[RMDB]
RNA sequence: GGGAACGACUCGAGUAGAGUCGAAAAGAUAUGGACUGCCAGCAACAGCUAUCACGUCGGAAACGACGUAUAGACAUGCUGAUGUCCUAAGUCAAAAGGGUAGCUAGGCUUCGGCCUAGCUACCCAACCUAUUGUCACAGUUCGCUGUGACAAUAGGAAAAGAAACAACAACAACAAC
Reactivity to 2A3 in 0.01 (KOAc 150mM, MgCl2 10mM, bicine 150mM(pH8.5), 24C), signal-to-noise 2, nucleotides 027 to 126: g010a010u020a030u060g010g010a000c050u080g220c220c010a000g000c020a040a290c030a300g070c030u020a010u040c170a000c030g000u000c010g020g000a010a010a020c010g000a010c010g000u000a000u000a000g050a180c080a150u060g000c000u020g000a000u030g000u000c000c010u000a030a000g010u020c020a060a010a110a110g000g000g040u000a000g000c010u010a000g000g000c000u030u120c300g030g060c020c000u000a000g000c000u000a000c010c000c010a030a000
Reactivity to DMS in 0.01 (KOAc 150mM, MgCl2 10mM, bicine 150mM(pH8.5), 24C), signal-to-noise 4, nucleotides 027 to 126: g000a020u000a250u010g000g000a020c000u000g020c290c020a020g000c000a060a160c300a120g000c000u000a010u000c230a000c000g020u000c000g030g010a050a030a120c010g010a010c010g000u000a000u000a010g010a150c150a150u000g000c000u000g000a090u010g010u000c000c000u000a030a080g000u010c020a080a080a120a110g010g010g010u000a000g000c000u000a000g000g000c000u010u000c240g020g020c000c000u000a000g000c000u000a000c010c000c000a000a020